[RMDB]
An RNA of 170 nucleotides, treated with DMS and 2A3 and read out base by base. 2A3 adducts were read by reverse transcription with SuperScript II with manganese. It was measured as part of the RMDB library 15KLIB.
RNA sequence: GGGAACGACUCGAGUAGAGUCGAAAACCAAAAAGGUAUUCUUUGUGUUAUGACAUCUCAGGCACUCUUUGAGUCCUUAGAGUUUACUGAAUUGUCUUUUACUAAUUACAAGCUCCAGUCUCAGAUUUACCAACCUCGUUCGCGAGGUUGAAAAGAAACAACAACAACAAC
Reactivity to DMS in 0.01 (KOAc 150mM, MgCl2 10mM, bicine 150mM(pH8.5), 24C), signal-to-noise 5, nucleotides 027 to 129: c030c010a070a060a070a040a080g030g030u020a010u000u070c000u000u000u000g020u050g030u060u030a070u040g020a070c020a100u050c050u030c040a000g050g000c260a080c010u040c030u010u000u000g000a190g040u050c100c080u020u030a040g000a030g040u000u010u150a100c030u060g050a040a040u040u000g030u000c060u020u020u000u080a000c150u030a080a120u070u040a090c000a060a100g010c060u000c000c000a070g030u040c020u030c070a060g010a060u050u000u060a080c020
Reactivity to 2A3 in 0.01 (KOAc 150mM, MgCl2 10mM, bicine 150mM(pH8.5), 24C), signal-to-noise 8, nucleotides 027 to 129: c010c000a060a020a000a000a050g150g010u100a100u040u010c040u020u080u060g090u020g030u100u120a070u150g030a010c010a160u030c030u000c050a000g020g000c140a000c040u000c050u040u160u200g050a070g050u090c020c000u010u010a020g010a000g040u030u060u070a060c000u020g010a050a030u050u060g020u050c000u000u080u030u060a110c090u060a070a090u120u080a050c050a130a030g010c020u040c020c020a020g100u010c010u010c040a030g010a040u090u090u070a060c010

The RNA was probed in 150 mM KOAc, 10 mM MgCl2 and 150 mM bicine (pH 8.5) at 24 C. For 2A3, 14,673 sequencing reads were counted. For DMS the reverse transcriptase was MarathonRT.